[RMDB]
Conditions: 150 mM KOAc, 10 mM MgCl2 and 150 mM bicine (pH 8.5), 24 C.
The record gives the reactivity of an RNA of 177 nucleotides to DMS.
DMS adducts were read by reverse transcription with MarathonRT.

RNA sequence: GGGAACGACUCGAGUAGAGUCGAAAAAAGAAGAAAAGUUAGUGGGUUUUAGUUACUUAUUUUGAAAUGUAAAUAGCGCAACAGGUGCCAUAUACAAACUGCCUUUUUUUCGUUUUAGUUUACUUAUCAUAACAUAAAAGUUCGCUUUUAUGUUAUGAAAAGAAACAACAACAACAAC
Reactivity to DMS in 0.01 (KOAc 150mM, MgCl2 10mM, bicine 150mM(pH8.5), 24C), signal-to-noise 1, nucleotides 027 to 126: a070a020g000a050a040g010a040a040a060a060g010u010u010a030g030u010g020g030g000u000u000u000u000a080g000u010u000a030c030u000u000a020u000u000u000u000g010a100a130a060u000g000u010a040a040a020u010a060g020c100g010c050a030a050c110a090g010g020u000g040c020c020a060u000a030u000a050c110a020a100a040c010u000g010c130c000u000u000u000u000u020u000u000c030g010u000u000u010u030a180g020u020u000u000a040c020u010u010a090u000
Source: RMDB library RFMREP, as collected in RNAgym. The DMS profile rests on 982 reads.